[RMDB]
RNA sequence: GGGAACGACUCGAGUAGAGUCGAAAAACGAUAACGAGGCGCUCGCUAUUGCUGCGUAACUGACGGCCUGACGGUCUGACGUUACAAAGCUAAAGCGCGGUUGGACCCCACCGGGCAACAAAAGGGGAAAGGCGACCCCGUUUCGACGGGGUCGCAACGUUAGAAUAUACUUCGGUAUAUUCUAACGAAAAGAAACAACAACAACAAC
Reactivity to 2A3 in 0.01 (KOAc 150mM, MgCl2 10mM, bicine 150mM(pH8.5), 24C), signal-to-noise 1, nucleotides 027 to 156: a110c050g000a060u120a070a100c040g000a040g090g000c030g030c030u050c080g090c050u090a140u210u230g000c030u010g000c000g010u000a000a000c000u000g020a000c020g000g040c000c030u130g200a100c150g000g000u010c000u020g020a010c000g000u000u000a010c010a010a030a000g000c000u010a060a050a000g000c000g000c000g030g010u040u080g170g050a010c000c030c000c010a000c000c010g060g220g040c010a080a020c000a040a070a020a020g000g000g030g000a110a080a000g120g010c000g010a010c000c000c050c020g000u090u070u090c100g060a010c040g010g000g000g000u000c010g000c000a000a000
Structure probing data (2A3) for a 207-nucleotide construct. 2A3 adducts were read by reverse transcription with SuperScript II with manganese. It was measured as part of the RMDB library M2RFPK.